This 207-nucleotide RNA was probed chemically with 2A3.

[RMDB]
RNA sequence: GGGAACGACUCGAGUAGAGUCGAAAAAGCGCGCAUACUACGGUAUGCACGCAAUCAGAAAUCGGGAAUGAUGUUCUCCCCUGGGAUUCCAAAACCGCUGUUUCGCUGAUGACGUCUGCUUUUUUAAUCACCACCGUUUGGUUCGCCAAACGGUGAAGCCUUUUAUGAGGUUCGCCUCAUAAAAGGCAAAAGAAACAACAACAACAAC
Reactivity to 2A3 in 0.01 (KOAc 150mM, MgCl2 10mM, bicine 150mM(pH8.5), 24C), signal-to-noise 2, nucleotides 027 to 156: a000g000c010g000c000g010c010a000u000a010c000u020a020c100g050g000u020a000u000g000c000a000c010g020c000a010a030u080c030a010g150a060a100a070u150c080g000g000g040a050a140u070g070a090u100g070u100u010c030u020c010c020c010c000u020g030g040g040a100u070u130c030c010a000a010a050a090c040c040g040c120u090g070u010u050u120c040g000c040u050g040a060u040g020a050c020g020u000c020u040g000c100u090u120u030u000u020u210a080a160u110c060a010c090c000a000c000c000g000u010u000u000g020g000u010u010c080g040c070c010a000a000a000c000g010g000u000g000a000a000
The 2A3 profile rests on 1,133 reads. The RNA was probed in 150 mM KOAc, 10 mM MgCl2 and 150 mM bicine (pH 8.5) at 24 C.